[RMDB]
RNA sequence: GGGAACGACUCGAGUAGAGUCGAAAAGCCGAUCACGGCCAUCCUCCAGCAUCCAGGAGUCUUCCUCAGAGUCAGAGGACGGCGAUGCCCGAGGCGAGAUCUUUGACAUCUACGUGGUCACCGCUGACCUCUCAUGCCCUUUCGAGGGCAUGAGAGGAAAAGAAACAACAACAACAAC
Reactivity to DMS in 0.01 (KOAc 150mM, MgCl2 10mM, bicine 150mM(pH8.5), 24C), signal-to-noise 1, nucleotides 027 to 126: g030c000c110g000a130u020c050a040c070g000g000c010c030a110u010c010c000u010c030c060a120g000c040a050u010c010c240a080g000g010a080g010u000c040u000u000c030c010u040c050a280g010a140g010u050c140a170g000a040g020g010a070c040g000g000c080g000a010u000g000c030c040c300g000a040g000g000c100g000a000g020a050u020c040u000u000u010g020a130c210a030u000c030u000a070c000g000u020g010g000u000c010a060c090c140g000c010u000g010a150
Reactivity to 2A3 in 0.01 (KOAc 150mM, MgCl2 10mM, bicine 150mM(pH8.5), 24C), signal-to-noise 1, nucleotides 027 to 126: g030c000c000g010a070u140c030a010c070g010g000c000c020a120u060c030c010u020c000c010a000g040c000a030u170c100c050a060g070g040a070g150u010c020u040u000c010c000u000c030a060g020a090g300u050c040a050g000a000g020g020a010c030g020g000c050g000a010u020g010c000c010c000g010a020g000g000c050g000a000g050a030u010c000u180u290u300g060a080c040a110u000c000u020a000c010g050u060g030g010u050c020a020c070c050g040c050u030g050a070